RNA sequence: GGGAACGACUCGAGUAGAGUCGAAAAGAUAUGGAUGAUCCAAGGUAGAAGUAAUCGGAAACGAUUAUACUUCUAUAAUCUUGAGUCAUCCUAAGUCAAAAGUUUUUGGGCUUCGGCCCAAAAACAAGACGUUAAAGUAGUUCGCUACUUUAACGUCAAAAGAAACAACAACAACAAC
Reactivity to DMS in 0.01 (KOAc 150mM, MgCl2 10mM, bicine 150mM(pH8.5), 24C), signal-to-noise 3, nucleotides 027 to 126: g010a020u010a300u010g000g010a020u010g000a020u010c030c010a020a030g020g010u000a030g020a000a000g020u000a020a020u000c000g010g000a110a080a140c000g020a020u000u000a110u010a100c010u000u000c010u010a090u010a300a090u010c000u000u000g000a060g010u010c000a010u000c000c000u000a010a110g010u010c010a090a130a110a130g000u000u000u000u000u000g000g010g020c000u000u010c290g040g010c000c000c000a010a000a010a020a010c010a160a070
Reactivity to 2A3 in 0.01 (KOAc 150mM, MgCl2 10mM, bicine 150mM(pH8.5), 24C), signal-to-noise 2, nucleotides 027 to 126: g010a000u050a020u100g010g000a000u010g000a010u020c050c010a010a010g060g000u140a020g080a020a010g000u010a010a000u020c020g010g040a050a030a030c020g020a000u060u070a040u120a130c000u010u020c010u000a040u060a070a050u060c000u010u010g020a010g000u000c010a010u000c000c020u010a070a000g000u020c030a000a000a040a290g010u020u010u010u000u000g030g000g000c040u070u120c300g180g000c000c000c040a000a000a000a000a000c000a000a010